[RMDB]
RNA sequence: GGGAACGACUCGAGUAGAGUCGAAAAAGAAACUGUCGUGAAAGAUACGGCUAAACGCACCGAACUGUUGAAUGCGAUUAAAACCAAACCAAUCAUCGCAAAGAUGGCAGCGUGGGCUUAUAAGUGGUUUAGUGAUGAUUCUGAAUUCGGCGAACGCCCUAUGUAUCUUAUUCGUAAGAUACAUAGGAAAAGAAACAACAACAACAAC
Reactivity to DMS in 0.01 (KOAc 150mM, MgCl2 10mM, bicine 150mM(pH8.5), 24C), signal-to-noise 5, nucleotides 027 to 156: a150g010a100a070a110c070u000g010u010c030g020u000g000a160a140a160g010a140u000a050c050g020g000c020u000a050a050a100c040g010c060a090c020c020g010a090a080c050u000g030u000u000g020a080a120u000g010c020g010a120u010u000a030a070a120a150c060c050a020a050a080c080c030a070a170u000c080a020u000c010g040c030a060a070a220g010a120u000g010g010c050a030g010c100g020u000g010g000g000c080u000u000a070u010a080a110g020u010g020g010u000u000u000a070g030u000g020a100u000g010a100u000u010c020u000g010a070a180u000u000c030g010g000c020g000a080a090c070g010c090
Reactivity to 2A3 in 0.01 (KOAc 150mM, MgCl2 10mM, bicine 150mM(pH8.5), 24C), signal-to-noise 9, nucleotides 027 to 156: a000g090a010a070a020c080u060g010u020c010g010u030g060a150a040a030g040a020u110a080c040g020g000c010u030a050a040a010c050g030c050a030c010c030g050a100a050c040u050g060u070u060g090a130a080u040g010c010g000a010u050u110a040a080a050a080c090c070a110a050a060c040c050a040a100u110c030a010u020c040g000c010a030a080a060g080a060u140g020g000c010a010g000c010g050u130g020g040g000c060u180u090a130u050a260a050g030u060g060g000u050u020u070a030g000u020g060a110u050g010a030u100u020c020u030g080a110a110u110u050c010g010g010c030g030a040a020c050g070c010